Background:
Chemical mapping of a 207-nucleotide RNA with 2A3 and DMS. The RNA was probed in 150 mM KOAc, 10 mM MgCl2 and 150 mM bicine (pH 8.5) at 24 C. For DMS the reverse transcriptase was MarathonRT.
RNA sequence: GGGAACGACUCGAGUAGAGUCGAAAACUGACCUCAAGCACUCUUCUGCUGAAUAAAGGGGACGUGGCUGUCCUACGCCAUAAUGGGCAUCAGGACGUCAUACACAGAAGUGUUGGGAAAUCACCUUACAAGGUACAGUCCUCUGCUCAGGGGGGCCGGAUCAUAUUCUGUUCGCAGAAUAUGAUCCAAAAGAAACAACAACAACAAC
Reactivity to 2A3 in 0.01 (KOAc 150mM, MgCl2 10mM, bicine 150mM(pH8.5), 24C), signal-to-noise 4, nucleotides 027 to 156: c040u060g030a070c000c020u060c080a070a030g070c030a020c030u060c020u070u050c020u050g100c030u060g080a140a120u150a170a120a030g060g000g000g020a020c060g000u010g030g000c080u170g010u020c000c000u020a020c040g000c000c000a070u180a300a140u300g120g010g000c010a040u070c090a040g000g000a000c000g000u010c000a000u020a060c060a000c010a030g110a120a070g030u020g020u100u140g070g010g030a010a110a100u140c050a050c010c010u040u130a080c050a160a080g010g000u050a060c000a000g000u000c000c000u000c010u020g010c020u020c070a080g030g000g000g000g000g020c030c060
Reactivity to DMS in 0.01 (KOAc 150mM, MgCl2 10mM, bicine 150mM(pH8.5), 24C), signal-to-noise 1, nucleotides 027 to 156: c050u010g030a120c000c010u010c040a090a130g010c030a060c010u010c080u000u000c090u000g020c030u020g020a060a170u000a090a110a040g020g000g050g030a030c040g000u000g030g060c030u000g050u020c010c000u000a100c130g000c020c010a100u000a060a120u000g000g030g020c000a070u010c170a020g010g010a000c010g010u000c010a030u000a110c060a050c030a090g030a070a060g000u000g010u000u000g000g010g010a080a110a130u000c070a090c030c020u000u000a100c130a070a080g020g040u040a060c020a080g040u000c000c000u010c030u010g020c050u000c070a100g000g010g000g000g090g000c130c070